[RMDB]
RNA sequence: GGGAACGACUCGAGUAGAGUCGAAAAAGAAAAGCGGAGGAGGGUUAUGGAUUGCGCUAAGUCCGCCCGCGCGUGGUGUGGGCUGGAAUUCGUGAAUGGAGGAUAAUUAAUGCCGCGGGCCCAAAAAGAUUCCUAUCUGAUUCGUCAGAUAGGAAUCAAAAGAAACAACAACAACAAC
Reactivity to 2A3 in 0.01 (KOAc 150mM, MgCl2 10mM, bicine 150mM(pH8.5), 24C), signal-to-noise 1, nucleotides 027 to 126: a030g030a010a050a010a020g000c050g060g060a060g080g030a040g080g020g000u030u170a040u100g040g030a060u000u140g030c010g000c020u040a000a030g070u000c000c020g000c000c010c020g000c010g010c050g100u140g030g110u050g020u040g030g040g000c090u090g000g040a040a010u100u040c040g000u020g050a060a060u040g060g000a020g000g000a010u000a040a020u130u060a080a060u070g030c000c000g000c000g010g040g000c020c000c000a000a080a000a000a000
Reactivity to DMS in 0.01 (KOAc 150mM, MgCl2 10mM, bicine 150mM(pH8.5), 24C), signal-to-noise 3, nucleotides 027 to 126: a100g010a110a080a080a180g000c100g000g000a090g000g010a130g000g000g020u000u000a050u000g020g010a100u000u000g010c050g030c160u000a050a050g010u000c010c020g010c010c000c010g000c050g000c150g050u010g020g010u000g050u000g000g000g020c010u030g040g000a060a050u000u000c090g030u000g000a040a100u010g010g010a120g000g010a090u000a070a070u000u010a030a100u010g000c030c020g010c030g000g010g000c010c030c040a030a050a060a080a080
The record gives the reactivity of an RNA of 177 nucleotides to 2A3 and DMS.
The reactions ran in a buffer of 150 mM KOAc, 10 mM MgCl2 and 150 mM bicine (pH 8.5), at 24 C.
DMS adducts were read by reverse transcription with MarathonRT.